[RMDB]
RNA sequence: GGGAACGACUCGAGUAGAGUCGAAAAUCAACAAACCGGUAUGAUGAUCCUGUUGACGUUGCUGGGGCGGACACCGCCUCUCAUGUUGCAGCCUUACUUGAUGAUGAGCGAUAUGAGAAUCCGGAUUGGAUUGAUGAUCAGGGAUGGCGAUAUGCACAAUGGGAAGAUUAUUCGUAAUCUUCCCAUUAAAAGAAACAACAACAACAAC
Reactivity to 2A3 in 0.01 (KOAc 150mM, MgCl2 10mM, bicine 150mM(pH8.5), 24C), signal-to-noise 5, nucleotides 027 to 156: u020c010a020a060c030a060a090a150c060c090g160g000u200a240u080g020a030u020g010a020u020c000c000u010g010u010u030g030a020c040g010u020u040g010c100u120g010g010g020g010c040g000g050a080c140a120c070c000g000c000c010u000c010u000c010a060u080g070u070u070g010c010a030g010c000c010u070u210a060c000u030u040g010a020u010g010a010u040g030a070g130c130g060a030u040a090u300g070a090g050a010a050u020c000c000g060g160a100u070u210g030g000a010u000u070g040a060u110g010a020u030c010a020g000g000g060a040u070g000g000c020g020a030u020a050u150g020c040a020c010
Reactivity to DMS in 0.01 (KOAc 150mM, MgCl2 10mM, bicine 150mM(pH8.5), 24C), signal-to-noise 3, nucleotides 027 to 156: u010c020a050a080c030a060a110a110c060c060g000g000u010a160u000g030a120u010g010a110u000c020c020u000g030u000u000g000a090c250g010u000u000g030c010u010g010g000g070g040c030g010g010a140c130a100c020c010g010c020c010u000c010u010c060a080u010g020u000u010g030c020a220g010c040c040u010u030a130c030u000u000g010a070u000g000a150u000g020a190g010c040g000a090u010a060u000g010a110g020a070a070u000c010c000g020g050a190u000u010g040g010a130u000u010g010a100u000g010a060u000c030a050g010g010g000a080u010g010g000c020g020a100u000a050u000g000c060a070c140